[RMDB]
RNA sequence: GGGAACGACUCGAGUAGAGUCGAAAAAUACAUACUGACACCGGUUGCUCAACAGGCUGUGUGGGACAAUAGAAUAACAAGGCUGUCAAUUUGAGCUUGACGGCUGCAAACCGAAUGGAGUGAAAUGGUAACCGGACUCACUUCGGUGAGUCCGGAAGUAAUACAUCGGGUUCGCCCGAUGUAUUACAAAAGAAACAACAACAACAAC
Reactivity to 2A3 in 0.01 (KOAc 150mM, MgCl2 10mM, bicine 150mM(pH8.5), 24C), signal-to-noise 2, nucleotides 027 to 156: a000u140a010c030a050u130a030c070u080g050a030c010a040c050c040g050g000u030u100g000c040u070c050a060a040c030a140g060g020c030u000g020u030g000u050g150g020g030a030c050a050a090u080a090g080a060a060u180a110a020c080a140a040g060g000c010u000g010u000c020a020a030u060u050u180g030a000g050c000u020u010g010a000c010g000g000c040u050g000c010a030a080a040c020c030g030a060a080u080g030g010a030g020u080g040a070a050a050u090g030g000u050a050a020c000c000g000g000a000c000u000c000a000c020u030u080c130g060g010u010g000a010g020u000c000c000g040g000a000a000
Reactivity to DMS in 0.01 (KOAc 150mM, MgCl2 10mM, bicine 150mM(pH8.5), 24C), signal-to-noise 1, nucleotides 027 to 156: a080u070a090c070a090u010a220c010u000g030a070c030a030c060c010g010g020u000u000g000c030u030c060a080a120c040a080g020g000c040u010g000u020g040u000g000g000g010a060c020a040a080u020a080g000a090a090u030a030a130c080a090a200g010g030c020u000g020u010c010a010a040u000u000u010g000a130g030c210u010u010g010a020c090g040g050c000u000g030c100a070a070a070c070c000g000a050a100u010g000g000a140g030u020g000a060a010a060u000g010g050u010a040a080c020c020g000g010a030c000u000c010a030c000u000u010c250g030g020u010g000a060g020u010c000c050g080g040a000a020